Chemical mapping of a 177-nucleotide RNA with 2A3.
RNA sequence: GGGAACGACUCGAGUAGAGUCGAAAAGAAAGAAAGAAAGAAAGUGCUUAUGCUAAGGUGCAUCUAGUGCAGAUAGUGAAAUAGACUAGCACCUACUGCCCUAAGUGCUCCUUCUGGCAUAAGGAAAGUCAGCCGCUAUAUUCGUAUAGCGGCUGACAAAAGAAACAACAACAACAAC
Reactivity to 2A3 in 0.01 (KOAc 150mM, MgCl2 10mM, bicine 150mM(pH8.5), 24C), signal-to-noise 1, nucleotides 027 to 126: g060a030a080a020g080a020a030a000g090a040a060a000g090a060a070a070g240u260g040c020u000u000a000u020g000c030u080a000a000g010g020u040g000c000a000u000c000u000a000g000u090g000c000a000g010a010u080a000g040u060g040a170a070a000u150a080g190a060c100u170a080g000c000a000c000c020u030a000c000u000g000c020c000c000u000a000a000g000u000g000c000u000c000c000u100u040c120u080g040g070c000a030u000a000a010g020g110a010a010a010
The data come from the RNA Mapping Database (RMDB), library RFM100. Values cover nucleotides 27 to 126.